Chemical mapping of a 177-nucleotide RNA with 2A3 and DMS. DMS adducts were read by reverse transcription with MarathonRT. High DMS reactivity at an A or C suggests that its Watson-Crick edge is free. The RNA was probed in 150 mM KOAc, 10 mM MgCl2 and 150 mM bicine (pH 8.5) at 24 C.

[RMDB]
RNA sequence: GGGAACGACUCGAGUAGAGUCGAAAAGUCGCCUCGCCCGAGAGGACGACGAACACCUCCUCCUGAUCCGGGUGGGCGUGAGCCGCACCGCUGAACCGCUCGCCCGGCUCGAGGGCGUACUGGACGACCGACCUUUUAGUUUCGACUAAAAGGUCGGAAAAGAAACAACAACAACAAC
Reactivity to 2A3 in 0.01 (KOAc 150mM, MgCl2 10mM, bicine 150mM(pH8.5), 24C), signal-to-noise 2, nucleotides 027 to 126: g000u000c010g020c010c000u010c030g100c030c080c090g110a100g000a010g180g010a200c000g010a000c010g020a050a010c050a070c000c010u000c000c010u020c010c050u080g020a080u050c000c000g000g000g000u000g000g010g010c040g040u090g020a000g060c040c020g080c100a060c030c100g020c060u050g040a090a050c040c000g000c000u000c000g010c000c000c000g000g000c000u000c000g010a050g000g000g000c010g020u070a100c100u100g090g060a000c030g030a050
Reactivity to DMS in 0.01 (KOAc 150mM, MgCl2 10mM, bicine 150mM(pH8.5), 24C), signal-to-noise 1, nucleotides 027 to 126: g000u000c010g020c000c000u000c000g000c040c030c000g000a110g000a050g000g000a090c000g070a000c020g000a080a070c110a140c020c090u020c000c000u000c010c080u000g000a090u040c000c030g010g000g000u000g000g010g000c000g040u050g000a070g060c050c060g080c160a130c200c110g000c000u000g000a150a120c100c020g000c020u000c000g000c000c000c000g010g020c010u000c190g000a040g000g000g000c060g020u000a100c060u000g010g000a070c120g010a100